[RMDB]
This 177-nucleotide RNA was probed chemically with DMS and 2A3.
2A3 adducts were read by reverse transcription with SuperScript II with manganese.
For DMS the reverse transcriptase was MarathonRT.
The 2A3 profile rests on 5,929 reads.
The DMS profile rests on 2,892 reads.

RNA sequence: GGGAACGACUCGAGUAGAGUCGAAAAACAGCACCAGAGAUAAUUGGUCCAUUAGUCCUAUCUUCUAAGAUAUUACCUCUCUUAUUUCAUGUGACAUUAAAUAAGAACCAAUUGUCUGAUUUACGUGCCCAUCAAAGACUUUCGAGUCUUUGAUGGGAAAAGAAACAACAACAACAAC
Reactivity to DMS in 0.01 (KOAc 150mM, MgCl2 10mM, bicine 150mM(pH8.5), 24C), signal-to-noise 3, nucleotides 027 to 126: a100c140a170g000c170a100c010c140a080g000a040g000a000u010a000a000u010u000g010g010u000c060c120a100u080u040a110g000u020c040c140u000a010u010c040u010u030c220u010a060a070g000a010u000a050u010u000a060c080c140u010c240u000c000u000u000a010u000u000u000c130a000u010g000u040g010a140c110a080u000u000a040a000a040u010a000a010g000a000a090c000c000a030a010u000u000g020u000c010u000g000a110u030u040u030a060c220g040u020g000
Reactivity to 2A3 in 0.01 (KOAc 150mM, MgCl2 10mM, bicine 150mM(pH8.5), 24C), signal-to-noise 8, nucleotides 027 to 126: a010c060a010g120c030a040c020c020a030g020a000g000a140u020a020a020u030u010g010g020u080c080c050a150u160u160a050g040u030c020c020u020a020u000c020u190u050c080u170a140a040g010a020u020a020u040u110a050c010c030u100c010u000c000u030u010a010u000u020u020c050a010u020g170u170g270a130c020a090u030u020a010a000a010u010a010a010g010a020a000c000c000a000a000u010u000g000u000c010u020g120a200u050u070u160a060c080g050u070g030